[RMDB]
RNA sequence: GGGAACGACUCGAGUAGAGUCGAAAAAACGUGCUGCGUUGCCCGCCUGAUCGGGAACCGGCGUUGUACGCAAAGAUGAUGGGCCUCAUCGCCGAAUGCGGCGGUAACGUCAGUUCAGAACAUGGGGAGACGUACAUGGUUUCGACCAUGUACGUCUAAAAGAAACAACAACAACAAC
Reactivity to 2A3 in 0.01 (KOAc 150mM, MgCl2 10mM, bicine 150mM(pH8.5), 24C), signal-to-noise 2, nucleotides 027 to 126: a010a000c080g010u030g000c060u000g020c030g010u010u030g080c040c010c010g070c030c010u190g020a250u120c040g070g060g060a040a040c020c030g000g000c000g010u020u040g020u060a040c020g030c050a020a020a160g070a060u140g050a080u140g040g100g000c000c020u020c020a050u040c020g020c070c070g090a150a070u190g030c010g010g000c000g000g000u030a000a000c000g070u040c020a000g000u000u000c000a040g000a100a000c030a110u120g070g000g000g020
Reactivity to DMS in 0.01 (KOAc 150mM, MgCl2 10mM, bicine 150mM(pH8.5), 24C), signal-to-noise 2, nucleotides 027 to 126: a040a190c060g000u010g010c030u010g030c010g020u010u000g000c070c000c020g010c050c040u040g020a090u030c060g000g000g030a180a060c130c100g020g020c020g030u000u060g050u090a140c110g010c010a060a020a140g000a010u030g000a040u040g000g000g000c060c050u010c050a020u000c040g020c030c000g000a020a030u000g000c140g020g030c000g000g050u000a010a000c000g010u050c020a040g010u000u000c030a070g000a170a120c120a060u010g000g000g040g000
The data come from the RNA Mapping Database (RMDB), library OK1LIB. An RNA of 177 nucleotides, treated with 2A3 and DMS and read out base by base. For DMS, 2,438 sequencing reads were counted. DMS adducts were read by reverse transcription with MarathonRT. Conditions: 150 mM KOAc, 10 mM MgCl2 and 150 mM bicine (pH 8.5), 24 C. The 2A3 profile rests on 1,245 reads. 2A3 adducts were read by reverse transcription with SuperScript II with manganese.